[RMDB]
Structure probing data (DMS and 2A3) for a 177-nucleotide construct. For DMS the reverse transcriptase was MarathonRT. The 2A3 profile rests on 14,460 reads. The reactions ran in a buffer of 150 mM KOAc, 10 mM MgCl2 and 150 mM bicine (pH 8.5), at 24 C. Values are in units of 0.01, from 0 to 300, in steps of 10.
RNA sequence: GGGAACGACUCGAGUAGAGUCGAAAAUGAGGAGGUGGAUGUAGCACAGAUACUAGCGGACAGCUUGGUGGAAGGGAGAGUGGCUAACAAGUUCAAAGCCUCCAGCGACUACGUCGGCACGUUAGAGCUACAGUAUGAGGUUCGCCUCAUACUGUAGAAAAGAAACAACAACAACAAC
Reactivity to DMS in 0.01 (KOAc 150mM, MgCl2 10mM, bicine 150mM(pH8.5), 24C), signal-to-noise 9, nucleotides 027 to 126: u010g000a120g000g010a060g010g030u000g000g000a130u010g020u000a050g020c060a090c120a080g010a210u010a070c060u000a050g020c050g020g020a090c160a110g000c040u000u000g020g010u000g010g010a090a090g000g010g000a070g010a100g010u000g010g000c040u010a060a090c140a060a090g010u000u000c100a050a100a160g000c030c010u000c030c030a090g010c060g000a080c040u000a050c100g010u000c050g010g010c060a060c090g010u000u000a080g000a150g010
Reactivity to 2A3 in 0.01 (KOAc 150mM, MgCl2 10mM, bicine 150mM(pH8.5), 24C), signal-to-noise 7, nucleotides 027 to 126: u180g010a070g030g010a020g000g020u060g020g040a080u050g030u050a020g020c030a020c020a090g060a050u100a060c040u040a030g020c010g030g090a050c040a050g040c040u060u110g040g010u040g030g050a070a040g020g020g020a070g010a010g040u070g030g000c010u030a080a040c040a120a040g050u130u130c050a080a070a010g020c000c000u010c010c000a010g030c010g030a030c020u120a030c060g050u040c030g050g000c030a010c090g030u040u100a050g010a020g130